[RMDB]
RNA sequence: GGGAACGACUCGAGUAGAGUCGAAAAUGGCCCGAACGGCGACGACAGCCAUUCCCAUCGAGUCUUUCAGCCCUCUCGCUCAGAGCACGGCGCCUCCCCCACAGUUCUCCGAUUCCAGUUUUCCCGUAAGUUCUUUGCAAUUCGUUGCAAAGAACUUAAAAGAAACAACAACAACAAC
Reactivity to 2A3 in 0.01 (KOAc 150mM, MgCl2 10mM, bicine 150mM(pH8.5), 24C), signal-to-noise 3, nucleotides 027 to 126: u080g050g020c040c000c000g030a120a030c080g040g030c010g020a070c040g010a020c060a010g020c000c010a020u030u040c000c000c010a010u060c030g020a030g060u000c020u020u100u050c030a030g020c020c020c000u010c010u030c020g010c010u040c030a010g010a010g040c040a010c040g040g000c020g030c020c000u020c000c010c000c000c000a030c000a010g010u030u020c010u000c010c020g040a060u070u010c010c010a020g020u000u020u060u000c000c000c010g000u010
Reactivity to DMS in 0.01 (KOAc 150mM, MgCl2 10mM, bicine 150mM(pH8.5), 24C), signal-to-noise 2, nucleotides 027 to 126: u030g010g020c030c010c060g000a110a120c090g020g010c040g000a050c060g010a150c120a130g010c020c010a110u000u000c030c000c000a200u010c110g000a050g000u010c000u000u000u010c080a110g000c020c010c050u020c030u000c040g030c020u000c070a100g000a080g000c090a050c070g000g000c020g010c010c000u000c000c010c000c060c010a020c090a030g000u030u000c030u000c010c030g020a160u030u000c010c000a060g000u030u000u000u000c000c020c040g030u030